[RMDB]
RNA sequence: GGGAACGACUCGAGUAGAGUCGAAAAAGGCUGUAAUGGCUUUCUGGUGGAAUGGGAUACGUUGAGAAUUUUGGCCGAGGAACAAAUCCUUCCUCACGGCCGGACACGGAUUGCACGCCCUUUGGGCAAGGAGUAGAAUUUCUAUUUCGCGCCGUGCGUAUGAAUAGUUGUUCGCAACUAUUCAUACAAAAGAAACAACAACAACAAC
Reactivity to 2A3 in 0.01 (KOAc 150mM, MgCl2 10mM, bicine 150mM(pH8.5), 24C), signal-to-noise 5, nucleotides 027 to 156: a000g040g000c030u040g030u110a060a090u170g000g000c000u040u060u030c070u070g030g040u060g010g050a110a080u080g030g010g020a040u050a070c070g030u040u070g040a060g040a160a160u040u060u100u150g010g000c010c010g010a000g000g010a030a030c060a070a180a080u090c010c010u010u000c000c000u030c030a080c090g000g000c000c000g010g000a010c010a000c000g000g030a060u060u300g020c030a020c050g020c000c000c010u100u090u210g010g000g000c010a020a030g020g000a010g010u030a010g000a120a190u080u230u050c000u000a020u010u050u030c040g000c020g000c020c010g010u010g000c030
Reactivity to DMS in 0.01 (KOAc 150mM, MgCl2 10mM, bicine 150mM(pH8.5), 24C), signal-to-noise 2, nucleotides 027 to 156: a060g000g030c020u000g020u020a140a090u000g010g030c020u000u000u000c030u010g020g000u000g000g000a080a080u010g020g000g000a070u000a000c080g000u000u010g010a140g020a090a130u000u000u000u000g040g030c030c020g020a050g000g010a060a300c050a070a090a080u010c090c210u010u000c000c000u000c020a090c030g140g090c020c000g020g010a070c030a090c070g010g000a090u010u010g010c020a110c050g000c010c000c040u000u000u000g070g040g000c020a050a060g010g010a000g030u000a040g000a090a170u000u000u010c060u000a070u010u010u000c010g000c060g010c010c010g010u000g000c080